[RMDB]
The record gives the reactivity of an RNA of 177 nucleotides to 2A3 and DMS.
RNA sequence: GGGAACGACUCGAGUAGAGUCGAAAAAUAAAUGCUGACGUCAACGUGGUCACCCAGGCCAGAAACAGGCCAACAACCCUGACCGGCUGCAAGAAAGCGAAGAAUUUUUCUUUUGCAGGUACAAAAAGAUAGACAACUUGUUCGCAAGUUGUCUAUCAAAAGAAACAACAACAACAAC
Reactivity to 2A3 in 0.01 (KOAc 150mM, MgCl2 10mM, bicine 150mM(pH8.5), 24C), signal-to-noise 1, nucleotides 027 to 126: a030u140a010a080a050u110g000c010u020g050a070c060g040u070c060a040a040c060g060u110g010g010u010c010a000c090c010c000a060g000g030c010c000a050g110a020a100a010c130a050g000g020c000c000a030a010c000a000a020c010c010c040u060g010a020c000c030g020g020c030u000g020c010a010a000g060a080a010a000g080c050g040a060a030g050a110a070u000u160u000u030u140c010u010u150u050u090g020c000a010g010g130u120a070c080a000a120a000a000a000
Reactivity to DMS in 0.01 (KOAc 150mM, MgCl2 10mM, bicine 150mM(pH8.5), 24C), signal-to-noise 1, nucleotides 027 to 126: a130u010a020a070a120u010g050c010u010g000a160c110g040u010c020a040a120c130g000u000g020g000u000c030a030c020c040c030a110g020g010c010c000a050g000a050a050a100c150a110g010g010c030c000a080a060c100a040a050c030c010c010u000g000a050c020c010g010g000c000u010g000c040a020a040g010a040a100a060g000c050g000a040a050g010a060a030u000u000u020u000u000c000u000u000u000u030g040c050a030g010g020u010a010c070a030a060a020a140a100

It was measured as part of the RMDB library M2PK90. 2A3 adducts were read by reverse transcription with SuperScript II with manganese. High DMS reactivity at an A or C suggests that its Watson-Crick edge is free.